[RMDB]
RNA sequence: GGGAACGACUCGAGUAGAGUCGAAAAGCCCGUUGCUGACUGAAACGGGCGGUGGCAUCCGGUUUUUGGCAAAAUAGGUAUAUCCCGGUUGCAGUUGACGCCAGAAGUUGGAAUAGGACGAAUUACAGCAUACCGUAAUGUUCGCAUUACGGUAUGCAAAAGAAACAACAACAACAAC
Reactivity to DMS in 0.01 (KOAc 150mM, MgCl2 10mM, bicine 150mM(pH8.5), 24C), signal-to-noise 2, nucleotides 027 to 126: g010c000c000c020g020u010u000g020c030u000g000a090c110u000g000a090a040a020c050g010g010g010c020g010g010u010g010g000c040a070u000c040c030g020g020u010u000u000u010u000g030g020c090a070a060a070a060u010a080g010g020u010a120u010a090u000c090c010c000g020g020u000u000g020c060a090g000u000u000g000a150c150g030c020c020a030g010a070a040g020u000u000g010g000a070a080u010a100g000g000a060c080g000a110a070u000u020a110c260a130

About this RNA:
Chemical mapping of a 177-nucleotide RNA with DMS. The DMS profile rests on 2,007 reads. Conditions: 150 mM KOAc, 10 mM MgCl2 and 150 mM bicine (pH 8.5), 24 C. DMS adducts were read by reverse transcription with MarathonRT. Values cover nucleotides 27 to 126.